[RMDB]
RNA sequence: GGGAACGACUCGAGUAGAGUCGAAAAGCUCGGUGACACCGCGUCUGCCUGGGUCCGAAAGAUUUCUUGUCGCAAAUCUACAAGACAUUGGUUAACGUGUGGGCCGCUUGAGCGGCCGCUCGGCGGGUCAUCCUAGGCGCUUCGGUGCUUGGGAUGAAAAAGAAACAACAACAACAAC
Reactivity to 2A3 in 0.01 (KOAc 150mM, MgCl2 10mM, bicine 150mM(pH8.5), 24C), signal-to-noise 9, nucleotides 027 to 126: g020c010u010c010g020g050u050g030a020c010a020c060c010g020c010g030u000c030u040g020c000c000u030g050g000g020u000c010c000g050a080a060a010g020a010u010u020u020c020u050u130g120u100c050g010c100a030a020a070u030c010u030a030c030a060a000g020a010c020a040u010u070g030g020u070u120a050a020c020g010u020g010u090g040g040g000c010c000g000c010u160u270g040a030g030c000g010g010c010c000g000c010u020c010g040g000c010g010g010g010
Reactivity to DMS in 0.01 (KOAc 150mM, MgCl2 10mM, bicine 150mM(pH8.5), 24C), signal-to-noise 8, nucleotides 027 to 126: g010c010u010c040g010g010u000g000a120c120a090c030c020g010c040g010u000c050u000g000c010c010u010g010g010g010u000c020c010g010a110a150a050g010a030u000u000u010c030u020u020g000u020c160g000c180a040a030a040u010c020u010a050c180a140a060g010a020c040a060u010u010g000g010u010u010a090a140c040g010u000g000u010g010g020g010c000c000g010c010u020u040g010a100g020c010g010g020c050c030g000c020u010c030g010g000c020g010g000g010
Chemical mapping of a 177-nucleotide RNA with 2A3 and DMS.
As a SHAPE reagent, 2A3 marks flexible, mostly unpaired nucleotides at the ribose 2'-OH.
Reactivities are given for positions 27 through 126.